[RMDB]
RNA sequence: GGGAACGACUCGAGUAGAGUCGAAAAGAAGAAAAAGAAAUGUCCGUAACAGGGGCCACAGCAGAAGCGUUCAAGUCGAGGCCACUGUACGUCUCUAGUGAGACGGCGACGUGAACGCGGAAGAAAACCACUAUUUUAGCUUCGGCUAAAAUAGUGGAAAAGAAACAACAACAACAAC
Reactivity to 2A3 in 0.01 (KOAc 150mM, MgCl2 10mM, bicine 150mM(pH8.5), 24C), signal-to-noise 4, nucleotides 027 to 126: g080a070a020g060a020a120a020a030a000g110a020a120a020u120g010u050c050c010g030u120a110a020c020a060g030g010g000g000c000c020a030c040a020g110c020a020g020a150a010g030c000g000u010u030c030a050a000g010u020c000g040a040g010g100c050c040a030c030u080g030u120a050c050g010u020c010u000c030u100a260g150u240g200a010g000a000c000g000g010c000g000a000c000g030u040g010a000a000c000g000c000g000g030a030a050g030a010a050a020a010
Reactivity to DMS in 0.01 (KOAc 150mM, MgCl2 10mM, bicine 150mM(pH8.5), 24C), signal-to-noise 2, nucleotides 027 to 126: g000a080a070g020a070a050a090a080a100g000a050a140a120u010g000u010c040c030g010u060a160a140c130a080g000g010g000g000c010c090a080c130a070g010c100a080g030a180a130g010c000g000u000u000c000a080a050g030u020c030g000a170g010g000c030c040a070c020u000g000u020a030c000g010u000c000u000c010u050a150g020u020g000a000g000a000c010g010g030c010g010a000c000g010u000g000a000a010c000g040c010g000g050a110a060g000a090a060a110a150

The record gives the reactivity of an RNA of 177 nucleotides to 2A3 and DMS. For 2A3, 3,332 sequencing reads were counted. For 2A3 the reverse transcriptase was SuperScript II with manganese. Conditions: 150 mM KOAc, 10 mM MgCl2 and 150 mM bicine (pH 8.5), 24 C.